Source: RMDB library RFM100, as collected in RNAgym. The record gives the reactivity of an RNA of 177 nucleotides to DMS and 2A3.
RNA sequence: GGGAACGACUCGAGUAGAGUCGAAAAGAAAGAGAGAGAGAGAGAGAGACACGCCUGAAUGGCAGCAGCAGGCCUUAGCGGCAAUGGACAGCAGGCACAGGACCAGCUUUGCCUCGAGCCGCAACGCAAAUUUCUAGCUCUUCGGAGCUAGAAAUUUAAAAGAAACAACAACAACAAC
Reactivity to DMS in 0.01 (KOAc 150mM, MgCl2 10mM, bicine 150mM(pH8.5), 24C), signal-to-noise 2, nucleotides 027 to 126: g000a040a030a090g010a060g000a020g000a020g000a080g000a070g000a090g000a030g000a010g020a040c160a080c300g010c050c020u000g000a070a040u030g000g010c020a060g000c050a130g030c020a050g000g010c040c040u000u040a130g000c040g010g000c000a150a100u010g000g020a030c070a100g000c030a040g010g000c020a070c090a070g000g000a130c020c020a060g010c030u010u020u030g000c000c020u000c090g000a160g020c040c030g020c040a080a040c230g040c180
Reactivity to 2A3 in 0.01 (KOAc 150mM, MgCl2 10mM, bicine 150mM(pH8.5), 24C), signal-to-noise 2, nucleotides 027 to 126: g040a000a060a010g040a000g050a000g000a000g040a000g010a000g000a000g010a000g000a000g050a000c000a090c080g010c000c000u060g130a170a150u260g030g000c010a000g020c030a000g040c010a010g020g010c020c040u020u100a050g050c000g000g000c000a030a080u170g000g020a020c020a010g040c020a030g000g030c020a030c020a020g020g100a120c070c000a040g060c000u090u090u210g000c000c050u040c040g010a020g010c000c000g010c000a030a020c100g040c040
The 2A3 profile rests on 1,041 reads. For 2A3 the reverse transcriptase was SuperScript II with manganese.